Structure probing data (DMS) for a 177-nucleotide construct. Values cover nucleotides 27 to 126. It was measured as part of the RMDB library TTRDES. The reactions ran in a buffer of 150 mM KOAc, 10 mM MgCl2 and 150 mM bicine (pH 8.5), at 24 C.
RNA sequence: GGGAACGACUCGAGUAGAGUCGAAAAAAAAAGAUAUGGAGGAGCUACCCACCCUGAUGGAGCGCAGAUAGCUUAUCGGAAACGAUAAGCUGUAGCUCCAAUUAGGAGGCUCCUCCUAAGUCAAAAACUAUACUCACCUGUUCGCAGGUGAGUAUAGAAAAGAAACAACAACAACAAC
Reactivity to DMS in 0.01 (KOAc 150mM, MgCl2 10mM, bicine 150mM(pH8.5), 24C), signal-to-noise 1, nucleotides 027 to 126: a030a060a100a080a030g000a130u010a140u000g020g020a040g000g020a000g020c010u000a170c010c000c000a300c060c000c000u000g010a020u000g010g000a000g020c000g020c300a200g000a080u010a030g020c000u030u000a030u000c000g000g010a110a070a150c000g020a050u000a000a010g000c000u020g000u000a050g020c000u000c010c000a030a060u000u000a020g000g010a040g020g000c020u010c000c010u000c000c000u000a000a050g000u000c090a060a120a140a100a070